This 207-nucleotide RNA was probed chemically with 2A3. Source: RMDB library M2RFPK, as collected in RNAgym. Values are in units of 0.01, from 0 to 300, in steps of 10. Values cover nucleotides 27 to 156. The RNA was probed in 150 mM KOAc, 10 mM MgCl2 and 150 mM bicine (pH 8.5) at 24 C. For 2A3 the reverse transcriptase was SuperScript II with manganese.
[RMDB]
RNA sequence: GGGAACGACUCGAGUAGAGUCGAAAAAGUGAGUAUGGCUCGUUACGACGAGCCAUACUCACAACGGUUUUCCUAAAUCGUCGUGAGACGGACCUCGGAAAACCUAGUAUUUAAAUAACUAGGUCAAAUUAGCCUAGAUCCUUCGGGAUCUAGGCAACGUGAAUCUUAUCUUCGGAUAAGAUUCACGAAAAGAAACAACAACAACAAC
Reactivity to 2A3 in 0.01 (KOAc 150mM, MgCl2 10mM, bicine 150mM(pH8.5), 24C), signal-to-noise 2, nucleotides 027 to 156: a000g010u000g000a010g000u000a010u000g010g000c000u000c020g010u000u070a100c300g010a000c000g000a100g000c000c000a000u000a000c000u000c000a000c000a000a000c000g010g000u000u000u020u000c010c010u030a010a010a030u110c010g010u000c000g010u020g080a100g000a030c000g000g010a010c000c010u030c030g020g000a010a010a010a010c000c000u010a000g000u000a050u020u080u140a130a250a170u160a060a040c100u100a020g020g010u050c000a040a030a220u200u140a100g010c000c000u000a010g000a000u000c010c000u000u100c210g060g000g000a010u010c010u000a000g000g010c000a000a000